RNA sequence: GGGAACGACUCGAGUAGAGUCGAAAAGCAGGUGACAUAUCGGGGCGGAAGACUUGGAGAUUACUGUUCCGGAUCCUCACAUUGAGCAUAGGUGUGGUCUGUCUUGCCAUCAAUAUUGCCACAAUUGAAUUCACCUGUAUUUCGAUACAGGUGAAUUAAAAGAAACAACAACAACAAC
Reactivity to 2A3 in 0.01 (KOAc 150mM, MgCl2 10mM, bicine 150mM(pH8.5), 24C), signal-to-noise 4, nucleotides 027 to 126: g030c030a020g060g060u020g020a030c010a030u120a030u110c030g000g020g020g010c030g040g010a030a010g020a030c050u110u140g100g020a100g020a100u030u170a140c060u090g060u100u030c020c000g010g010a060u070c010c000u050c010a040c020a090u090u150g040a050g020c050a050u070a090g010g050u040g030u040g060g000u010c030u020g080u040c020u060u110g020c000c000a030u060c010a020a070u080a060u110u140g000c020c020a060c030a110a130u150u260g090
Reactivity to DMS in 0.01 (KOAc 150mM, MgCl2 10mM, bicine 150mM(pH8.5), 24C), signal-to-noise 7, nucleotides 027 to 126: g010c090a080g010g010u000g010a060c100a050u000a070u000c060g010g000g000g020c030g000g010a100a060g010a060c060u010u010g010g010a130g010a100u010u000a090c120u010g010u010u000c050c030g010g000a050u010c060c040u000c040a090c100a110u000u000g010a120g010c110a080u000a070g000g010u010g020u010g000g010u010c050u000g000u010c050u000u000g010c020c020a050u010c070a030a060u010a060u010u010g010c020c030a040c120a070a110u010u010g000

Source information
Conditions: 150 mM KOAc, 10 mM MgCl2 and 150 mM bicine (pH 8.5), 24 C. The record gives the reactivity of an RNA of 177 nucleotides to 2A3 and DMS. For 2A3 the reverse transcriptase was SuperScript II with manganese. Reactivities are given for positions 27 through 126.